[RMDB]
RNA sequence: GGGAACGACUCGAGUAGAGUCGAAAAAAAGCAGACCAGUUGCGCAAGGAUACCGAGCAAGACAAGGCAAUUGAGUCGGUAGAACAGAACUACAACAAACUGUUGCUAAUGGUGGUCGGCACGGCCAGUCUAGUAUCGUCUUCGGACGAUACUAGACAAAAGAAACAACAACAACAAC
Reactivity to 2A3 in 0.01 (KOAc 150mM, MgCl2 10mM, bicine 150mM(pH8.5), 24C), signal-to-noise 3, nucleotides 027 to 126: a000a010a000g060c050a020g010a010c000c000a040g050u030u050g000c050g030c040a050a030g100g010a020u030a120c010c040g020a030g060c030a050a030g040a090c050a070a040g080g010c020a030a070u020u060g030a080g120u050c030g000g020u030a030g010a080a030c030a050g050a090a030c040u120a050c060a090a000c040a050a180a010c020u040g010u050u050g000c020u070a140a060u100g130g040u030g000g000u080c020g000g030c050a020c070g000g000c010c010a010
Reactivity to DMS in 0.01 (KOAc 150mM, MgCl2 10mM, bicine 150mM(pH8.5), 24C), signal-to-noise 4, nucleotides 027 to 126: a070a040a100g020c010a050g010a020c020c010a130g020u000u000g010c250g010c090a080a100g000g000a150u010a060c070c030g010a120g000c030a050a040g000a080c130a080a140g000g010c100a090a040u000u000g010a130g000u000c060g000g000u000a010g000a100a090c100a090g010a110a050c080u000a040c080a030a060c110a040a110a070c110u000g000u000u000g000c030u010a030a080u010g020g030u000g030g000u010c020g000g020c030a060c140g010g010c050c020a080

Source: RMDB library OK2TRN, as collected in RNAgym. The record gives the reactivity of an RNA of 177 nucleotides to 2A3 and DMS. Conditions: 150 mM KOAc, 10 mM MgCl2 and 150 mM bicine (pH 8.5), 24 C.